[RMDB]
RNA sequence: GGGAACGACUCGAGUAGAGUCGAAAAGGCGAGUGGUUAUCCGGGUGCGCUGGACGAUCUGAUCUUCUCGGGAGCCGGAUCCGGAUGUCGCGGCGACGACGAGGACGAGUGCACGCCGCCAUUCGAAGAUAUACCGGUACUUCGGUACCGGUAUAUCAAAAGAAACAACAACAACAAC
Reactivity to DMS in 0.01 (KOAc 150mM, MgCl2 10mM, bicine 150mM(pH8.5), 24C), signal-to-noise 4, nucleotides 027 to 126: g020g020c010g000a060g020u020g000g010u060u040a110u010c090c060g000g000g030u010g000c010g000c000u000g010g000a180c110g010a090u010c080u010g010a120u000c030u000u000c050u010c010g000g010g010a190g000c090c010g000g000a050u010c070c030g010g010a040u010g010u000c090g010c040g000g010c020g000a200c090g010a050c070g000a070g010g000a050c050g000a070g000u000g030c050a050c040g010c050c020g000c020c020a020u000u000c020g010a120a080
Reactivity to 2A3 in 0.01 (KOAc 150mM, MgCl2 10mM, bicine 150mM(pH8.5), 24C), signal-to-noise 7, nucleotides 027 to 126: g130g010c020g000a020g030u070g040g040u160u130a040u130c040c020g000g000g020u070g050c020g000c020u050g020g060a040c040g020a070u060c060u150g040a090u020c030u120u010c040u040c000g030g010g070a020g040c040c000g020g020a030u020c030c040g070g000a100u150g020u110c090g010c010g160g000c000g020a070c040g000a020c060g020a080g060g040a050c070g020a030g050u070g020c070a000c080g070c000c000g000c000c010a010u010u000c010g020a090a020